[RMDB]
RNA sequence: GGGAACGACUCGAGUAGAGUCGAAAAGAUGAGGAGCCCUCAGGCCUUCUAACCUAAUAUAAUGAAGAGUUAGAGGAUCAUAGUGAUGGUGGUGUGGCUAUUUUCUGGUUUGAGGAUUUGCAGGAAAAUAGACUUUUUACUUCUGACUUUGGAGAUAAUUAAAUAAUCGAUUCGUCGAUUAUUUAAUAAAAGAAACAACAACAACAAC
Reactivity to 2A3 in 0.01 (KOAc 150mM, MgCl2 10mM, bicine 150mM(pH8.5), 24C), signal-to-noise 3, nucleotides 027 to 156: g030a030u100g010a020g030g000a020g030c030c040c020u010c020a050g070g000c000c000u080u030c010u040a010a020c000c010u050a100a050u120a160u120a230a190u200g060a070a040g090a010g050u010u040a010g000a000g000g020a030u070c030a060u070a030g060u030g060a060u030g000g040u010g000g010u010g010u020g040g000c000u010a060u080u030u010u020c040u050g060g080u080u070u100g040a040g030g050a080u080u070u180g000c040a040g020g090a030a020a020a070u050a040g020a020c010u120u090u070u030u040a070c010u030u060c030u030g100a100c000u110u090u130g070g010a080g000a070u200a090
Reactivity to DMS in 0.01 (KOAc 150mM, MgCl2 10mM, bicine 150mM(pH8.5), 24C), signal-to-noise 2, nucleotides 027 to 156: g000a150u000g010a090g020g020a120g030c040c020c070u000c070a100g010g020c040c000u000u000c020u000a040a030c010c010u000a090a180u010a150u010a150a160u010g020a160a190g010a070g000u000u000a030g000a070g020g010a050u000c040a100u000a090g020u000g000a100u000g010g040u000g020g020u000g030u000g000g030c000u000a030u010u000u010u000c050u010g020g000u010u000u010g010a080g000g020a070u000u010u010g010c020a140g010g000a050a020a040a080u000a080g010a060c030u000u000u010u010u000a070c050u000u000c020u020g020a050c050u000u000u000g020g000a140g010a120u000a060